[RMDB]
RNA sequence: GGGAACGACUCGAGUAGAGUCGAAAAAUGAUCCUUCGGGUGAAUGAUUCAGAGGACAGCGGCAAACGGGGUAGUAAUGCAUAGGUAUGUACCCUCUGGUCGGGAAUAGCCACGGGAAACUGUGGGUUAAGGUGCAUUCUUUCGAGAAUGCACCUUAAAAAGAAACAACAACAACAAC
Reactivity to DMS in 0.01 (KOAc 150mM, MgCl2 10mM, bicine 150mM(pH8.5), 24C), signal-to-noise 2, nucleotides 027 to 126: a040u010g000a150u030c000c010u000u040c100g010g010g030u020g000a080a030u040g030a050u000u000c050a070g000a030g000g000a050c080a040g030c030g020g000c060a060a120a150c140g030g030g010g000u020a040g020u020a130a080u000g000c050a070u030a150g010g000u010a010u000g000u010a080c040c000c000u020c080u010g000g000u020c020g040g000g000a040a070u070a120g030c000c000a000c000g030g010g010a080a050a120c020u000g020u030g000g000g010u010
Reactivity to 2A3 in 0.01 (KOAc 150mM, MgCl2 10mM, bicine 150mM(pH8.5), 24C), signal-to-noise 2, nucleotides 027 to 126: a000u130g010a120u120c030c000u040u060c050g140g010g040u040g030a090a080u080g110a110u190u110c060a000g000a060g090g000a010c020a000g060c010g100g050c010a050a050a030c030g050g000g050g030u060a020g020u070a140a000u120g060c040a090u100a060g020g050u150a070u150g000u050a060c000c000c000u000c020u010g000g000u010c000g060g010g030a010a100u160a070g070c000c000a010c000g000g000g000a070a080a000c010u010g000u010g000g000g050u020
Chemical mapping of a 177-nucleotide RNA with DMS and 2A3. 2A3 adducts were read by reverse transcription with SuperScript II with manganese. Values cover nucleotides 27 to 126. The 2A3 profile rests on 1,070 reads. The DMS profile rests on 3,334 reads. It was measured as part of the RMDB library RFM100.